[RMDB]
About this RNA: Structure probing data (DMS and 2A3) for a 177-nucleotide construct.
RNA sequence: GGGAACGACUCGAGUAGAGUCGAAAAACUCGGAUGAGUACGCUCAUCCGAGAAAUUCGUUGGAUGAAUGUGAGGCAUUGGAUUGAUUUCGUUCAAUCCGAGCCCUACAUUCAUCCGGGGUUUGUAACUAUGGAGAUUCGUUCGCGAAUCUCCAUAGAAAAGAAACAACAACAACAAC
Reactivity to DMS in 0.01 (KOAc 150mM, MgCl2 10mM, bicine 150mM(pH8.5), 24C), signal-to-noise 2, nucleotides 027 to 126: a120c010u000c000g010g000a000u000g000a010g000u000a070c270g010c010u000c010a000u000c000c000g010a000g000a010a050a040u000u020c050g000u020u030g030g020a000u000g010a030a010u000g000u000g000a120g010g000c000a150u020u010g010g000a000u000u000g010a030u010u030u020c220g020u030u000c010a010a000u000c000c000g000a020g000c010c000c010u000a000c000a000u000u010c000a000u000c000c010g000g000g020g000u010u010u010g000u020a050a200
Reactivity to 2A3 in 0.01 (KOAc 150mM, MgCl2 10mM, bicine 150mM(pH8.5), 24C), signal-to-noise 4, nucleotides 027 to 126: a000c000u000c000g000g020a010u000g000a000g020u050a030c280g020c050u000c010a000u010c000c000g000a000g000a000a020a000u150u130c130g090u100u110g000g000a000u000g000a000a000u000g020u000g020a040g100g030c300a300u000u030g020g030a000u000u000g010a020u080u130u290c170g070u110u010c050a000a000u000c000c000g000a000g000c030c000c000u000a000c000a000u000u000c000a000u000c000c000g000g000g000g000u050u120u140g040u080a060a000